[RMDB]
Structure probing data (2A3 and DMS) for a 207-nucleotide construct.
DMS adducts were read by reverse transcription with MarathonRT.
For 2A3 the reverse transcriptase was SuperScript II with manganese.
RNA sequence: GGGAACGACUCGAGUAGAGUCGAAAAAUGUGCGGCAAAGAAACAUUGUUUAUGCAAAGGCACUUCGCAAUGUCUGCUCAAACAUUGCUUAUUCAAACACGCUUCACAAUGUGCGACAAAGAAACAUAAAACGUUUAGUACUUCGGUACUAAACGAAGAGUGUAGAUAUCUUCGGAUAUCUACACUCAAAAGAAACAACAACAACAAC
Reactivity to 2A3 in 0.01 (KOAc 150mM, MgCl2 10mM, bicine 150mM(pH8.5), 24C), signal-to-noise 8, nucleotides 027 to 156: a010u130g020u060g060c030g020g010c050a080a080a070g080a050a140a030c030a050u050u060g050u050u110u080a120u100g000c060a110a110a090g080g000c020a010c010u130u110c070g000c020a010a020u010g000u000c020u060g050c040u050c110a050a030a010c010a010u000u020g000c010u050u070a120u110u090c060a000a070a040c080a020c110g010c020u060u060c030a020c010a050a070u080g020u040g050c030g030a020c070a020a120a020g130a030a130a010c050a040u200a080a090a000a010c010g000u000u000u000a000g000u000a000c000u010u020c160g040g000u000a000c000u010a000a000a000c000g010a020a010
Reactivity to DMS in 0.01 (KOAc 150mM, MgCl2 10mM, bicine 150mM(pH8.5), 24C), signal-to-noise 3, nucleotides 027 to 156: a100u010g030u000g020c030g030g070c100a080a050a090g010a130a100a030c010a040u000u000g030u000u000u000a070u010g020c030a040a100a060g010g000c020a050c040u000u010c260g010c230a050a040u000g000u000c020u020g020c050u000c090a080a060a030c020a020u000u000g000c000u000u000a110u000u000c040a100a090a040c040a080c050g000c070u020u000c090a080c030a060a100u010g020u010g000c010g030a210c050a090a100a120g020a120a120a020c040a070u000a050a070a100a140c000g000u020u000u000a010g000u000a010c010u000u010c300g050g040u000a000c000u000a000a000a000c000g010a010a070